[RMDB]
RNA sequence: GGGAACGACUCGAGUAGAGUCGAAAAAAAAAGAGUGUACGAUGGAAGAAAAUGAUGCGGUGGAUGCAUGUUGCAAGUUCUCCACGUGAAAGUUUCGAGAGGCUGAAGGGACGCAUCCUUCCUUCCAGAUACCCACUCCAUUCGUGGAGUGGGUAUCAAAAGAAACAACAACAACAAC
Reactivity to DMS in 0.01 (KOAc 150mM, MgCl2 10mM, bicine 150mM(pH8.5), 24C), signal-to-noise 2, nucleotides 027 to 126: a050a030a070a100a050g000a070g010u020g010u010a060c170g010a150u000g000g000a060a030g020a030a020a050a060u000g010a050u000g030c040g020g020u000g010g010a060u020g000c010a050u000g030u000u010g000c050a090a090g000u000u000c120u000c000c020a090c050g020u000g010a040a060a120g000u000u000u000c040g000a100g020a130g010g010c090u020g000a090a050g020g000g010a090c050g010c020a010u000c000c060u010u000c040c010u000u010c010c060a050
Reactivity to 2A3 in 0.01 (KOAc 150mM, MgCl2 10mM, bicine 150mM(pH8.5), 24C), signal-to-noise 1, nucleotides 027 to 126: a010a000a010a000a000g150a050g020u090g020u040a060c100g100a170u050g000g050a060a100g020a040a140a010a070u130g060a040u040g000c030g010g060u030g030g030a020u070g000c050a040u150g090u260u170g080c050a110a000g000u090u000c040u000c010c020a060c010g010u030g110a080a080a050g020u020u030u090c070g020a100g000a010g100g000c060u080g020a030a000g010g040g010a000c020g000c010a000u000c000c020u010u000c010c000u000u060c000c000a000
The record gives the reactivity of an RNA of 177 nucleotides to DMS and 2A3. The 2A3 profile rests on 1,109 reads. Source: RMDB library OK2TST, as collected in RNAgym. Conditions: 150 mM KOAc, 10 mM MgCl2 and 150 mM bicine (pH 8.5), 24 C. The DMS profile rests on 1,650 reads.